[RMDB]
RNA sequence: GGGAACGACUCGAGUAGAGUCGAAAAUUGCGCCUCCGAUUCGCCGUCGGCAUUUCCCCAGCAGCGAUGACCUACCAGGCUGCGGUGCGGCUCGCCGCACAGGUCAUCCCUCAUCGGGCGCGUCCUGGAUAGGGCUAUACUUUCGAGUAUAGCCCAACCGAUAACAUAAGUUCGCUUAUGUUAUCGGAAAAGAAACAACAACAACAAC
Reactivity to 2A3 in 0.01 (KOAc 150mM, MgCl2 10mM, bicine 150mM(pH8.5), 24C), signal-to-noise 3, nucleotides 027 to 156: u100u090g010c010g010c000c010u040c020c000g010a030u090u110c060g010c040c040g040u020c010g020g030c070a080u040u020u020c020c010c000c000a020g050c030a000g010c030g010a020u020g010a010c000c020u050a100c030c030a020g050g030c050u070g030c070g020g010u060g010c090g080g010c080u100c130g070c000c000g000c010a030c020a020g000g010u000c000a010u000c030c010c000u050c010a120u140c060g020g000g010c020g000c000g010u070c000c020u030g070g010a160u130a150g010g000g000c000u000a000u000a000c000u020u080u150c250g050a010g010u000a010u010a010g000c000c000c000a000a000
Reactivity to DMS in 0.01 (KOAc 150mM, MgCl2 10mM, bicine 150mM(pH8.5), 24C), signal-to-noise 2, nucleotides 027 to 156: u000u000g030c030g010c010c000u000c010c040g000a100u000u000c050g020c010c080g050u000c040g020g000c050a090u000u010u020c010c020c000c100a130g040c120a060g000c100g030a060u010g010a110c010c010u010a200c060c090a140g030g030c070u010g020c040g020g020u010g020c020g020g040c050u010c200g000c010c000g000c020a050c050a030g000g040u010c000a060u000c000c030c030u010c070a130u000c080g010g000g020c000g010c030g000u010c030c000u010g020g010a180u010a150g040g010g020c000u000a010u000a010c000u000u000u020c300g010a060g000u000a000u000a020g010c000c000c000a010a010
The record gives the reactivity of an RNA of 207 nucleotides to 2A3 and DMS. The RNA was probed in 150 mM KOAc, 10 mM MgCl2 and 150 mM bicine (pH 8.5) at 24 C. DMS adducts were read by reverse transcription with MarathonRT. 2A3 adducts were read by reverse transcription with SuperScript II with manganese.